[RMDB]
RNA sequence: GGGAACGACUCGAGUAGAGUCGAAAAGUACAUGAUGUAUAAAACGCAUGGAAAGAGGUGUGUAGUUAGCCCUACUGAACCCAGGGCUAAGCCAUACUUCGAUGAAUCCAUACCAAUCGUCUGAUUACGGUUAUUGCAUUUUCGAAUGCAAUAACCGAAAAGAAACAACAACAACAAC
Reactivity to 2A3 in 0.01 (KOAc 150mM, MgCl2 10mM, bicine 150mM(pH8.5), 24C), signal-to-noise 6, nucleotides 027 to 126: g080u060a010c050a050u090g010a140u080g210u070a120u120a160a120a040a020c050g020c030a010u010g020g000a030a090a020g000a020g020g010u000g000u000g000u020a130g300u030u010a010g000c010c000c000u060a090c080u060g080a080a090c040c040c040a030g020g000g000c000u010a010a010g050c020c000a000u010a020c000u000u030c020g030a030u170g090a050a040u000c010c000a020u040a140c020c030a040a120u130c050g070u050c070u070g030a110u060u180a060
Reactivity to DMS in 0.01 (KOAc 150mM, MgCl2 10mM, bicine 150mM(pH8.5), 24C), signal-to-noise 3, nucleotides 027 to 126: g000u020a070c060a070u010g050a040u000g000u000a100u010a080a080a160a100c190g000c070a010u000g000g000a040a140a080g000a030g000g010u010g010u000g010u030a150g020u000u000a000g000c020c000c000u010a060c080u000g030a150a140c300c300c100a020g000g000g000c000u000a010a000g020c030c000a030u010a000c000u000u000c010g040a130u000g000a140a060u040c010c020a050u010a140c110c120a020a080u010c130g000u010c020u000g000a100u000u010a120
Overview: Structure probing data (2A3 and DMS) for a 177-nucleotide construct. The data come from the RNA Mapping Database (RMDB), libraries RFM100 and RFMREP. For 2A3 the reverse transcriptase was SuperScript II with manganese. Conditions: 150 mM KOAc, 10 mM MgCl2 and 150 mM bicine (pH 8.5), 24 C.